RNA sequence: GGGAACGACUCGAGUAGAGUCGAAAACCCCGGGCACACGAGGCCUCCACUGCGGUUGCGCAGCCUGCCGAAGAGCGUGCGGCUUCUACUGCGGCUGCGCAAGCUCGACGCGCGCACUCUUGUCUGCCUGGGCACACUACUUCGGUAGUGUGCCCAGAAAAGAAACAACAACAACAAC
Reactivity to 2A3 in 0.01 (KOAc 150mM, MgCl2 10mM, bicine 150mM(pH8.5), 24C), signal-to-noise 2, nucleotides 027 to 126: c010c000c000c000g030g000g010c000a030c000a020c060g020a050g040g030c000c010u040c040c000a100c160u170g010c030g060g090u040u040g000c020g000c010a010g000c000c020u180g000c030c060g040a040a010g010a020g030c060g010u300g080c030g130g000c030u150u080c020u130a150c030u070g020c000g010g000c000u000g000c010g030c000a000a000g000c010u040c040g060a060c010g000c000g000c010g040c000a040c110u010c040u040u060g030u010c010u010g020c000
Source information
Chemical mapping of a 177-nucleotide RNA with 2A3. For 2A3, 1,594 sequencing reads were counted. Values cover nucleotides 27 to 126. Conditions: 150 mM KOAc, 10 mM MgCl2 and 150 mM bicine (pH 8.5), 24 C. For 2A3 the reverse transcriptase was SuperScript II with manganese.